[RMDB]
RNA sequence: GGGAACGACUCGAGUAGAGUCGAAAAGGGGUCACCGUUUGACGCGUGGCGCAGCAACAGCUAUACUGAAGCCUCCACGGUAUAGACAUGCUGCCCACGCCGAGGUGACGGAGGCACCCAAAAUCCACGUUCUUGAAUUCGUUCAAGAACGUGGAAAUCAUUAACGAUGGUUCGCCAUCGUUAAUGAAAAAGAAACAACAACAACAAC
Reactivity to DMS in 0.01 (KOAc 150mM, MgCl2 10mM, bicine 150mM(pH8.5), 24C), signal-to-noise 2, nucleotides 027 to 156: g020g020g020g030u000c010a030c020c000g050u000u010u010g040a130c280g010c010g030u000g020g010c170g040c000a050g020c020a090a090c140a140g020c000u000a030u010a020c030u000g010a030a080g020c020c010u000c000c010a300c030g030g000u000a020u000a000g020a060c070a240u010g000c020u000g020c000c000c000a000c000g000c010c000g000a100g020g020u010g020a030c000g000g030a030g100g040c020a170c020c000c020a080a080a160a250u000c000c000a010c000g010u000u000c000u000u020g010a040a100u000u020c290g010u010u000c000a000a010g000a010a010c000g000u000g020g000a000a000a030
Reactivity to 2A3 in 0.01 (KOAc 150mM, MgCl2 10mM, bicine 150mM(pH8.5), 24C), signal-to-noise 5, nucleotides 027 to 156: g020g020g050g020u030c010a010c010c010g030u100u170u270g050a020c020g000c010g000u000g000g030c170g000c110a000g000c020a040a220c040a190g000c000u000a000u010a000c000u020g050a210a030g020c000c000u000c000c000a000c010g000g010u000a000u000a000g060a080c070a140u300g000c000u000g000c000c000c000a000c010g000c000c000g020a020g000g000u010g010a010c020g000g000a000g000g000c010a110c000c010c020a050a060a000a100u010c000c000a000c000g010u000u000c000u010u010g000a020a020u070u070c230g100u110u000c050a000a000g000a000a000c000g010u000g010g000a000a000a010